[RMDB]
RNA sequence: GGGAACGACUCGAGUAGAGUCGAAAAGUUAGGUGAGGCUCCUAUGCAAACACAGGCCACUGCCCAAAAAUGUCCAAACACGCCAAUGGGUAGAACAGGGAUUGUCGGAUUAAGGCUUUCCAUAAUGAAAACAAAGUAUGCUUCGGCAUACUUUGAAGAUCUUCUUCUUCUUCGGAAGAAGAAGAUCAAAAGAAACAACAACAACAAC
Reactivity to DMS in 0.01 (KOAc 150mM, MgCl2 10mM, bicine 150mM(pH8.5), 24C), signal-to-noise 1, nucleotides 027 to 156: g000u000u000a030g030g020u010g010a090g020g020c030u000c040c000u010a080u000g010c050a140a090a080c080a070c040a050g000g000c010c020a090c010u000g000c000c010c000a000a030a030a080a070u010g010u000c010c010a160a110a110c070a030c040g020c060c020a060a270u010g010g050g000u030a050g000a070a080c120a060g000g030g000a050u010u000g010u000c000g000g000a140u010u000a040a080g020g010c050u000u000u000c020c020a110u000a020a060u010g000a090a060a090a240c000a000a010a060g020u000a010u000g010c010u000u010c300g070g000c010a000u000a000c010u000u000u000g000a030a070
Reactivity to 2A3 in 0.01 (KOAc 150mM, MgCl2 10mM, bicine 150mM(pH8.5), 24C), signal-to-noise 2, nucleotides 027 to 156: g040u030u050a040g000g030u050g040a070g010g030c030u050c090c000u090a070u130g080c030a030a140a080c050a020c010a100g030g000c010c000a030c010u030g010c000c000c000a010a060a030a040a050u060g000u020c070c020a080a120a000c030a020c080g010c010c020a030a070u020g030g010g000u030a010g010a030a060c090a110g000g000g070a030u020u040g030u050c010g000g080a080u130u140a070a080g000g010c010u020u020u000c010c010a030u070a190a050u160g110a010a060a020a020c000a000a000a000g000u000a000u000g000c000u030u060c140g060g000c000a000u000a010c000u000u010u020g000a000a000